[RMDB]
RNA sequence: GGGAACGACUCGAGUAGAGUCGAAAAGGAUAAGCUCAUUGUGAACUAGAGCAUUCGGGGUCUUAUUUUAGUCUGUCUCCGCUUAAAUGUCUGGGAUCAGCUGUGGAUUGGCCUAGCACAAUAUCAGUCGUAUCCAGUUGUUCGCAACUGGAUACGAAAAAGAAACAACAACAACAAC
Reactivity to DMS in 0.01 (KOAc 150mM, MgCl2 10mM, bicine 150mM(pH8.5), 24C), signal-to-noise 1, nucleotides 027 to 126: g010g000a090u010a090a060g040c040u000c030a110u010u010g030u010g010a080a100c090u010a080g010a140g030c040a150u010u010c100g020g010g000g000u000c010u000u000a030u010u010u000u010a040g010u000c020u000g020u000c000u010c030c080g010c080u000u010a040a110a100u000g010u030c040u000g020g000g010a050u010c030a000g030c070u000g000u010g000g000a120u000u000g010g010c040c000u000a100g050c090a050c090a020a070u010a080u030c090a090g000
Reactivity to 2A3 in 0.01 (KOAc 150mM, MgCl2 10mM, bicine 150mM(pH8.5), 24C), signal-to-noise 1, nucleotides 027 to 126: g050g000a090u000a150a000g000c020u050c030a080u140u190g070u070g140a050a040c010u030a060g000a030g090c010a020u020u030c020g040g030g060g000u020c010u090u120a120u000u060u080u090a050g000u010c020u010g050u000c000u020c010c020g050c060u100u070a010a100a140u190g090u030c040u020g070g040g010a080u070c050a050g000c020u090g050u130g120g010a120u030u070g020g000c010c020u050a060g030c050a020c000a040a090u150a090u180c020a020g140
Source: RMDB library OK2TRN, as collected in RNAgym. The record gives the reactivity of an RNA of 177 nucleotides to DMS and 2A3. For DMS, 1,143 sequencing reads were counted.